[RMDB]
RNA sequence: GGGAACGACUCGAGUAGAGUCGAAAAUCCUAAGUCAAGGAUGUGGUACUUGGAUUUAUGGACUGUAGCUAUUCGGAAACGAAUAGCGCAGAUAGUCCAUUGUCAGUACCACUGCCCUUGAUAUGGAAAAAGGGGAUCCGGUUCGCCGGAUCCCCAAUGGCUUGUAAUUGUUCGCAAUUACAAGCCAAAAAGAAACAACAACAACAAC
Reactivity to 2A3 in 0.01 (KOAc 150mM, MgCl2 10mM, bicine 150mM(pH8.5), 24C), signal-to-noise 1, nucleotides 027 to 156: u040c010c000u010a090a000g020u030c000a000a000g010g000a020u010g000u010g020g020u000a000c020u050u220g150g000a050u160u300u200a010u040g010g000a000c000u000g000u010a070g030c000u000a000u000u000c010g030g030a100a000a000c000g010a000a000u000a010g010c000g000c000a000g050a050u200a030g010u000c000c000a000u000u030g000u000c000a010g000u000a000c000c000a000c000u010g000c010c000c000u010u000g000a000u000a010u020g000g040a060a110a150a110a120g000g030g000g000a000u020c020c030g000g170u090u100c300g060c060c000g020g010a000u010c000c000c000c000a000a000